[RMDB]
RNA sequence: GGGAACGACUCGAGUAGAGUCGAAAAGACUCCAGGUUUUAGUUACUUAUUAUGAAAUGUAAAUUUGGUUCCUUUGGAAAACAACAAUAACGUGUAGUAUUGUUUUAUUCAAUCAUUCAGAAUUGGUGUUGACUAUUUAGUUCGCUAAAUAGUCAACAAAAGAAACAACAACAACAAC
Reactivity to DMS in 0.01 (KOAc 150mM, MgCl2 10mM, bicine 150mM(pH8.5), 24C), signal-to-noise 2, nucleotides 027 to 126: g000a100c110u010c000c020a080g000g000u000u010u000u000a140g010u000u010a060c060u000u020a130u020u000a080u020g010a080a070a020u010g010u000a010a020a070u000u000u000g010g000u000u010c010c010u000u000u010g010g000a010a020a090a150c300a000a010c000a010a010u010a040a080c030g030u010g010u000a120g030u010a010u000u000g000u000u000u030u000a180u010u010c010a010a040u000c090a090u000u020c140a060g010a070a090u000u010g040g010u010
Reactivity to 2A3 in 0.01 (KOAc 150mM, MgCl2 10mM, bicine 150mM(pH8.5), 24C), signal-to-noise 2, nucleotides 027 to 126: g000a000c050u040c000c000a040g000g050u040u050u000u020a030g020u000u030a050c020u080u070a060u300u080a170u300g080a080a150a060u100g010u060a010a070a080u010u040u030g030g000u020u000c000c000u050u000u000g060g020a030a030a000a010c010a000a010c000a010a020u070a100a090c080g130u140g180u220a120g030u020a010u010u030g000u000u000u040u000a030u050u040c000a010a040u020c020a120u290u250c030a030g190a180a170u120u130g100g000u000